[RMDB]
RNA sequence: GGGAACGACUCGAGUAGAGUCGAAAAGAUAUGGAGUGGUAGGGAGGCUCAUGGUCGGAAACGACCAUCUGGCCGAAGAACUACGUAACAUCUCCUAAGUCAAAAGAAAAAGGUUCGCCUUUUUCAACUCAUGAUACAUGUUCGCAUGUAUCAUGAGAAAAGAAACAACAACAACAAC
Reactivity to 2A3 in 0.01 (KOAc 150mM, MgCl2 10mM, bicine 150mM(pH8.5), 24C), signal-to-noise 3, nucleotides 027 to 126: g010a010u020a010u060g000g000a010g000u060g020g010u050a010g010g010g010a020g010g010c000u000c040a010u010g030g000u000c000g000g020a010a020a000c000g010a010c010c000a010u000c090u110g060g000c000c000g060a110a010g000a000a000c000u010a000c020g050u090a100a060c040a190u060c000u000c010c000u000a010a000g010u000c020a030a050a110a290g040a010a020a010a010a000g050g010u060u090c300g190c030c000u000u050u000u010u000c020a020a070
Reactivity to DMS in 0.01 (KOAc 150mM, MgCl2 10mM, bicine 150mM(pH8.5), 24C), signal-to-noise 7, nucleotides 027 to 126: g020a020u000a010u010g000g010a030g040u000g010g010u000a020g010g000g000a020g030g020c000u010c300a000u000g000g010u000c000g010g020a020a000a030c000g010a000c000c000a000u000c120u000g020g020c010c000g010a070a120g020a200a110c010u000a010c010g010u010a090a250c240a060u010c010u000c000c000u000a000a110g000u000c020a060a050a150a120g000a000a010a010a020a010g000g010u000u010c300g010c010c000u000u000u000u000u000c000a100a240